[RMDB]
Chemical mapping of a 177-nucleotide RNA with 2A3 and DMS. Reactivities are rounded to 0.1 and cut off at 0 and 3. DMS (dimethyl sulfate) methylates the pairing face of unpaired adenines and cytosines. Values cover nucleotides 27 to 126.

RNA sequence: GGGAACGACUCGAGUAGAGUCGAAAAGAAACAUGGUUCGCCAUGUUUCAAAGAAGCUCAUAAUGACGCAAACUACGGCGUCGCCGUGAGCAAACGGCGAAAAAAGACUUAUCUUCGGAUAAGUCAAUCCACUAAAUAAGUUCGCUUAUUUAGUGGAAAAAGAAACAACAACAACAAC
Reactivity to 2A3 in 0.01 (KOAc 150mM, MgCl2 10mM, bicine 150mM(pH8.5), 24C), signal-to-noise 6, nucleotides 027 to 126: g000a010a000a000c000a000u010g010g030u040u050c100g040c050c000a000u010g000u000u000u000c000a000a000a010g070a070a020g000c010u020c040a080u070a180a090u180g020a010c000g000c030a060a180a190c130u220a070c180g080g000c000g000u000c010g000c010c010g020u030g020a040g010c030a010a050a010c030g050g000c080g060a070a050a010a000a010a050g010a010c000u000u000a000u010c010u020u070c260g060g000a000u000a000a000g010u000c000a000a010
Reactivity to DMS in 0.01 (KOAc 150mM, MgCl2 10mM, bicine 150mM(pH8.5), 24C), signal-to-noise 8, nucleotides 027 to 126: g000a000a010a010c000a000u000g000g010u000u020c230g020c000c000a010u000g000u000u000u000c010a060a090a130g000a110a120g010c010u000c010a040u000a090a080u000g010a010c010g010c010a050a080a140c250u010a130c270g000g000c010g010u000c010g010c140c090g000u000g000a050g000c040a040a060a080c090g000g010c070g010a000a030a050a070a100a080g000a020c000u000u000a010u000c000u000u010c190g020g000a010u000a000a010g000u000c000a040a060

Description:
High 2A3 reactivity points to a flexible backbone, as in loops and unpaired stretches.